Notes
Chemical mapping of a 170-nucleotide RNA with DMS and 2A3. The 2A3 profile rests on 15,008 reads. DMS adducts were read by reverse transcription with MarathonRT. The RNA was probed in 150 mM KOAc, 10 mM MgCl2 and 150 mM bicine (pH 8.5) at 24 C.
RNA sequence: GGGAACGACUCGAGUAGAGUCGAAAAUAGAAGAGGAGUCUCCUGGACGCCCCGCCCGGUCGGGAUGGGCCGCAGUUCCCGACGAGGAGCCCGCAGGUGGGAGGAUCAGCCACCGGAGGGGACGCGAAACGAUUGACCUUCGGGUCAAUCAAAAGAAACAACAACAACAAC
Reactivity to DMS in 0.01 (KOAc 150mM, MgCl2 10mM, bicine 150mM(pH8.5), 24C), signal-to-noise 6, nucleotides 027 to 129: u080a010g020a000a000g020a060g030g020a080g010u000c040u020c090c030u000g000g000a120c150g010c070c030c000c040g050c060c000c040g030g030u070c100g000g000g000a080u030g000g000g000c040c140g050c050a140g020u000u000c020c040c030g010a060c080g000a090g040g020a070g000c090c030c000g040c080a100g000g000u050g000g000g000a080g030g020a000u050c080a120g000c090c040a000c040c040g000g020a240g020g000g000g020a000c120g040c110g020a080a080a120c230
Reactivity to 2A3 in 0.01 (KOAc 150mM, MgCl2 10mM, bicine 150mM(pH8.5), 24C), signal-to-noise 5, nucleotides 027 to 129: u150a020g040a050a010g020a030g010g000a030g020u030c010u030c050c030u020g070g000a030c030g040c000c000c000c000g030c010c020c010g100g100u180c090g020g020g010a030u050g020g020g020c020c030g030c030a020g010u010u020c000c000c000g000a030c020g000a060g010g010a020g030c020c020c000g000c070a010g000g040u090g030g010g020a030g010g020a050u060c030a020g040c020c000a040c010c010g000g010a020g000g000g000g000a020c020g010c030g040a060a070a020c070